This 207-nucleotide RNA was probed chemically with 2A3 and DMS. The 2A3 profile rests on 3,936 reads. The RNA was probed in 150 mM KOAc, 10 mM MgCl2 and 150 mM bicine (pH 8.5) at 24 C. Reactivities are given for positions 27 through 156. 2A3 adducts were read by reverse transcription with SuperScript II with manganese. It was measured as part of the RMDB library VIROID.

[RMDB]
RNA sequence: GGGAACGACUCGAGUAGAGUCGAAAAGACAGUACACACUGUCCGACGGCAGAGUCGUCGACACCUCUCCCCCCCCCAGGUACUAUCCCUUUUCAAGGAUGUGUUCCCUAGGGGGGUGGGUGUACCUCUUUUGGAUUGCUCCGGCCUUCCAGGAGAGCAUAAGCGUUAUCUUCGGAUAACGCUUAUGAAAAGAAACAACAACAACAAC
Reactivity to 2A3 in 0.01 (KOAc 150mM, MgCl2 10mM, bicine 150mM(pH8.5), 24C), signal-to-noise 3, nucleotides 027 to 156: g010a000c000a000g040u230a120c140a020c020a000c160u010g000u000c010c000g000a000c000g010g030c060a070g000a020g100u030c000g000u010c000g040a020c030a170c040c020u070c050u030c000c000c000c000c000c000c000c000c000a000g020g000u000a000c000u000a000u010c010c010c000u070u250u160u300c070a040a020g000g000a010u010g040u020g020u220u100c060c020c040u200a160g000g000g010g000g000g000u150g040g000g000u010g020u050a100c000c010u010c000u040u010u030u000g010g000a020u030u020g000c010u030c120c300g130g000c010c010u000u000c000c000a000g000g010a000g000a000g020
Reactivity to DMS in 0.01 (KOAc 150mM, MgCl2 10mM, bicine 150mM(pH8.5), 24C), signal-to-noise 3, nucleotides 027 to 156: g000a030c010a030g030u000a230c220a190c190a190c030u010g020u000c010c000g030a260c040g010g010c020a160g000a070g000u000c010g000u000c030g010a120c070a060c040c030u020c060u010c020c010c000c000c000c000c010c000c020a040g030g010u010a060c010u010a050u000c000c010c010u000u000u030u000c300a130a060g000g000a040u000g020u000g000u000u000c240c000c020u000a090g060g000g000g020g020g020u000g010g000g030u000g000u000a080c080c010u010c020u020u000u000u000g000g010a050u000u010g020c000u000c180c250g070g000c030c020u000u000c020c020a040g000g010a050g010a050g010